Chemical mapping of a 177-nucleotide RNA with DMS and 2A3. The data come from the RNA Mapping Database (RMDB), library M2PK90. For DMS, 2,252 sequencing reads were counted. Values are in units of 0.01, from 0 to 300, in steps of 10.
RNA sequence: GGGAACGACUCGAGUAGAGUCGAAAAUUAAAUGGUAGCAACGGUUCCAAAGGAGCCGAAGUUCAAAGCUAAAGCAUCGAUCUAAUAUGCUACCAAAAAGGUAACGAGCUUGGCAAUGAACAAAAAAGUCAAUUAAUUAGUUCGCUAAUUAAUUGACAAAAGAAACAACAACAACAAC
Reactivity to DMS in 0.01 (KOAc 150mM, MgCl2 10mM, bicine 150mM(pH8.5), 24C), signal-to-noise 3, nucleotides 027 to 126: u000u000a050a090a110u000g010g020u000a010g030c010a170a300c040g000g010u010u000c010c010a080a140a210g040g010a020g010c010c000g010a030a080g000u000u000c010a000a010a300g000c000u000a090a030a020g010c020a060u000c050g010a060u000c060u000a040a080u010a070u000g030c010u010a010c010c000a010a020a070a070a050g000g000u000a040a130c040g020a060g000c020u000u000g000g000c040a020a300u000g010a000a000c010a030a040a070a100a090a090
Reactivity to 2A3 in 0.01 (KOAc 150mM, MgCl2 10mM, bicine 150mM(pH8.5), 24C), signal-to-noise 2, nucleotides 027 to 126: u070u070a020a060a120u050g010g000u010a020g000c010a030a100c020g010g010u010u000c020c050a280a280a220g010g000a000g000c010c010g050a060a020g010u000u000c020a010a010a010g000c000u070a230a000a020g000c010a130u050c000g090a080u040c050u020a090a010u140a140u180g000c030u000a010c010c000a010a020a020a040a060g080g000u030a070a020c020g000a000g010c020u000u010g000g030c000a010a030u020g000a000a000c000a020a100a000a000a020a050